[RMDB]
RNA sequence: GGGAACGACUCGAGUAGAGUCGAAAAUUGUGCGGAGGCACUCGAAUUGACGGUACGAAGCGGGCGCGUACAUUUUCUCAUCCGAGACGGGACAAGGGCACCUGCAACAAAAAUCUACGCGGCAAUGAUAGAUAGCACGAUUCGUCGUGCUAUCUAUAAAAGAAACAACAACAACAAC
Reactivity to DMS in 0.01 (KOAc 150mM, MgCl2 10mM, bicine 150mM(pH8.5), 24C), signal-to-noise 2, nucleotides 027 to 126: u000u010g020u010g020c050g050g010a130g040g010c010a020c060u000c100g010a060a080u010u000g010a060c080g010g030u000a080c070g010a060a050g010c050g000g020g000c070g010c050g010u000a050c060a120u020u000u010u000c040u000c020a110u000c110c060g000a080g010a080c140g000g020g010a070c050a060a110g030g000g000c080a070c040c020u000g000c070a070a080c100a050a050a050a040a100u000c030u000a050c030g010c040g000g000c080a080a070u010g000
Reactivity to 2A3 in 0.01 (KOAc 150mM, MgCl2 10mM, bicine 150mM(pH8.5), 24C), signal-to-noise 1, nucleotides 027 to 126: u030u040g010u040g020c030g040g060a050g020g000c020a010c080u050c040g060a080a080u100u070g020a010c010g010g030u030a000c030g030a070a000g010c020g010g050g020c040g020c030g040u030a060c040a030u100u100u000u000c030u000c020a100u090c080c130g040a040g000a090c090g000g020g000a010c030a110a070g070g020g000c020a030c010c040u060g010c030a050a060c040a040a140a020a000a010u060c020u060a030c080g000c000g070g000c010a010a080u090g010
The record gives the reactivity of an RNA of 177 nucleotides to DMS and 2A3. DMS adducts were read by reverse transcription with MarathonRT. The reactions ran in a buffer of 150 mM KOAc, 10 mM MgCl2 and 150 mM bicine (pH 8.5), at 24 C. The 2A3 profile rests on 1,410 reads.